[RMDB]
RNA sequence: GGGAACGACUCGAGUAGAGUCGAAAACUUAUGUCGCUUAUCAAUGGAAAUUAAACGCCGAUGUGAUUUUAUGCCUUUUUUUGUAUAUGCCAGUAACGAUUUAUGGGCUAUUCGCAUGGAAAAAGACAGAAGUACAUGAAUUCGUUCAUGUACUUCUAAAAGAAACAACAACAACAAC
Reactivity to 2A3 in 0.01 (KOAc 150mM, MgCl2 10mM, bicine 150mM(pH8.5), 24C), signal-to-noise 5, nucleotides 027 to 126: c020u120u120a080u170g080u050c020g020c080u120u110a080u160c030a110a110u130g070g070a080a090a130u120u100a170a280a060c080g010c090c020g190a070u010g020u010g050a060u030u050u080u190a080u200g000c010c020u030u070u030u000u030u050u030g060u020a180u000a010u210g100c050c040a030g050u030a050a000c030g010a020u000u060u070a080u140g000g010g000c010u010a030u000u040c030g000c010a010u040g000g020a040a070a020a000a050g020a000c030
Reactivity to DMS in 0.01 (KOAc 150mM, MgCl2 10mM, bicine 150mM(pH8.5), 24C), signal-to-noise 5, nucleotides 027 to 126: c040u010u010a070u010g020u000c030g020c070u000u000a100u000c080a090a080u010g010g000a100a100a100u010u010a070a160a210c240g020c070c040g000a050u010g020u000g000a040u000u000u010u000a050u020g010c000c000u020u000u000u010u010u000u020g020u010a090u000a060u000g010c090c090a060g000u000a060a050c120g000a070u000u000u000a040u010g010g000g000c000u000a070u000u000c040g000c030a040u000g010g000a040a050a070a070a080g010a070c110

Chemical mapping of a 177-nucleotide RNA with 2A3 and DMS. The DMS profile rests on 5,469 reads. It was measured as part of the RMDB library OK2TST. For 2A3 the reverse transcriptase was SuperScript II with manganese. For 2A3, 4,166 sequencing reads were counted. Reactivities are given for positions 27 through 126.